RNA sequence: GGGAACGACUCGAGUAGAGUCGAAAAUAAACACCUCGAAUGAGGUGGAGUAUGGUGCAGCUGAGAGGCUCGACAGAUGCACCUAAAAGCGAGCCUUCAAAGGUCGAGGAAAACUCGACCCCAAAAACGUCAUCGAGGUCUUCGGACCUUGAUGACGAAAAGAAACAACAACAACAAC
Reactivity to DMS in 0.01 (KOAc 150mM, MgCl2 10mM, bicine 150mM(pH8.5), 24C), signal-to-noise 1, nucleotides 027 to 126: u080a040a090a130c010a000c000c020u000c000g000a180a020u040g010a000g000g000u000g010g000a090g040u020a020u040g040g040u000g000c010a030g000c020u010g000a000g000a120g020g020c000u000c000g000a120c020a010g000a020u000g000c050a000c000c000u000a020a050a060a050g000c090g000a010g020c000c010u040u020c150a100a200a130g000g000u000c000g000a000g040g020a130a070a070a180c000u000c000g000a000c030c000c050c060a020a050a080a050a110
Reactivity to 2A3 in 0.01 (KOAc 150mM, MgCl2 10mM, bicine 150mM(pH8.5), 24C), signal-to-noise 3, nucleotides 027 to 126: u110a000a030a000c000a000c020c010u000c030g120a160a230u300g000a010g000g000u000g000g000a020g020u070a060u140g000g000u000g010c000a000g000c010u010g000a010g000a030g010g000c000u010c000g000a000c000a000g010a020u000g000c000a000c000c000u000a000a000a000a100g100c010g000a000g020c000c000u090u090c140a100a030a010g020g000u000c020g010a010g000g080a150a090a100a120c000u000c000g000a010c000c000c010c010a040a060a000a010a000
Chemical mapping of a 177-nucleotide RNA with DMS and 2A3. Conditions: 150 mM KOAc, 10 mM MgCl2 and 150 mM bicine (pH 8.5), 24 C. Source: RMDB library OK1LIB, as collected in RNAgym. 2A3 adducts were read by reverse transcription with SuperScript II with manganese.